[RMDB]
RNA sequence: GGGAACGACUCGAGUAGAGUCGAAAAUGUCGGCAAGCUCUAUAUAUGGACACUUACGAAGGGUUUUGGUUGUUUUGUAUCUCAAGCCGACUUUGAGUAUAUGAGGAAAAUACGACAGAAAAAACAAAUAGACCGGUAUCCUUCGGGAUACCGGUAAUCAUAAGGCAAAGUUCGCUUUGCCUUAUGAAAAAGAAACAACAACAACAAC
Reactivity to 2A3 in 0.01 (KOAc 150mM, MgCl2 10mM, bicine 150mM(pH8.5), 24C), signal-to-noise 2, nucleotides 027 to 156: u030g010u010c020g010g060c070a030a020g010c020u020c070u070a100u080a080u040a010u300g050g030a090c030a040c130u120u240a030c070g120a130a040g050g020g020u030u030u130u080g050g000u000u060g010u000u000u020u050g070u060a100u050c040u000c020a050a000g000c010c000g050a040c010u060u000u030g000a000g000u020a020u010a040u180g020a050g010g080a100a030a030a100u050a020c070g110a040c070a050g160a020a050a000a000a030a000c030a010a120a030u110a020g110a020c000c000g020g000u000a010u000c000c010u060u050c140g030g000g020a000u000a000c000c020g000g000u000a030a000
Reactivity to DMS in 0.01 (KOAc 150mM, MgCl2 10mM, bicine 150mM(pH8.5), 24C), signal-to-noise 2, nucleotides 027 to 156: u000g030u000c020g030g040c020a120a180g010c030u000c020u010a080u010a120u000a120u000g000g020a070c030a010c040u000u000a100c060g020a100a090g010g000g030u000u000u000u010g010g010u000u010g000u000u000u000u000g010u000a120u000c000u000c010a030a300g050c010c020g010a030c020u010u010u000g000a250g020u000a080u000a060u020g010a080g020g000a060a050a080a120u010a090c030g020a090c050a090g020a000a070a040a060a060a040c030a040a070a080u000a080g000a060c010c000g010g000u000a000u020c000c000u000u010c300g060g000g010a020u000a000c000c010g000g020u000a000a000